[RMDB]
RNA sequence: GGGAACGACUCGAGUAGAGUCGAAAAGAAUUGGUAUGUAAGCUACCCCUUCCGGUAGCUGCGUCACACUUUAAGAGUGUGCAUACUGAGCCGAAGCUCAGCUUCGGUCCCCCAAGGGAAGAACAAAGAUCACCGCUAAUUUCGAUUAGCGGUGAUCAAAAGAAACAACAACAACAAC
Reactivity to 2A3 in 0.01 (KOAc 150mM, MgCl2 10mM, bicine 150mM(pH8.5), 24C), signal-to-noise 5, nucleotides 027 to 126: g100a010a110u020u020g010g010u000a010u010g000u000a010a000g010c000u000a000c000c000c000c000u020u000c010c000g000g020u000a000g000c000u000g000c000g010u010c000a000c000a000c020u060u110u300a300a110g220a010g300u010g000u000g000c000a000u000a000c000u000g000a000g000c010c010g000a010a000g020c000u070c300a040g000c000u000u000c000g010g000u010c020c010c000c000c010a040a060g060g010g000a010a010g020a010a020c100a030a080a010
Reactivity to DMS in 0.01 (KOAc 150mM, MgCl2 10mM, bicine 150mM(pH8.5), 24C), signal-to-noise 2, nucleotides 027 to 126: g000a080a140u000u000g000g000u000a000u000g020u000a270a130g010c000u000a000c000c000c160c000u000u000c000c040g030g000u000a000g000c040u000g000c000g000u030c000a000c000a000c010u010u020u080a240a080g000a030g020u000g000u000g040c010a000u000a000c000u000g000a000g010c000c000g000a030a000g010c000u040c300a080g000c000u000u000c000g000g020u000c040c050c010c150c120a110a070g000g050g000a020a040g000a180a170c300a040a140a130